The record gives the reactivity of an RNA of 177 nucleotides to 2A3 and DMS. 2A3 adducts were read by reverse transcription with SuperScript II with manganese. 2A3 is a SHAPE reagent: it acylates the 2'-hydroxyl of flexible nucleotides of all four kinds. Conditions: 150 mM KOAc, 10 mM MgCl2 and 150 mM bicine (pH 8.5), 24 C.
RNA sequence: GGGAACGACUCGAGUAGAGUCGAAAAAAGAGAGCAACGGGGCUAGCGAGUGGAUGUUCCGCCUCCCCAGGGUCCCGAGUGAGGCUUAUCCCGGGGAACUCGGCCCAGUCCCGAGAUGGCCGCGUCCGUUAUGAUAUAUGUUCGCAUAUAUCAUAACAAAAGAAACAACAACAACAAC
Reactivity to 2A3 in 0.01 (KOAc 150mM, MgCl2 10mM, bicine 150mM(pH8.5), 24C), signal-to-noise 3, nucleotides 027 to 126: a010a000g080a000g000a010g020c030a020a040c020g010g030g040g020c010u020a020g050c020g040a040g040u180g040g040a060u050g090u140u030c020c010g020c010c010u020c000c000c000c010a010g030g000g010u020c010c000c020g000a050g050u100g040a060g020g010c000u060u080a030u050c010c000c000g000g010g000g000a040a030c010u010c020g040g000c010c010c010a010g070u030c010c010c000g000a020g000a030u030g020g000c000c020g080c020g050u020c030c020
Reactivity to DMS in 0.01 (KOAc 150mM, MgCl2 10mM, bicine 150mM(pH8.5), 24C), signal-to-noise 6, nucleotides 027 to 126: a070a070g000a110g000a100g030c080a120a080c040g000g000g020g010c030u000a080g010c050g000a130g030u000g000g010a120u000g010u000u000c040c030g000c220c060u000c000c010c010c020a120g020g010g010u000c150c010c010g000a120g020u010g000a090g010g010c250u010u010a050u000c000c010c020g020g000g000g010a060a040c050u000c040g000g000c090c070c070a130g000u000c020c010c000g000a100g000a070u000g000g010c010c020g010c070g000u000c100c070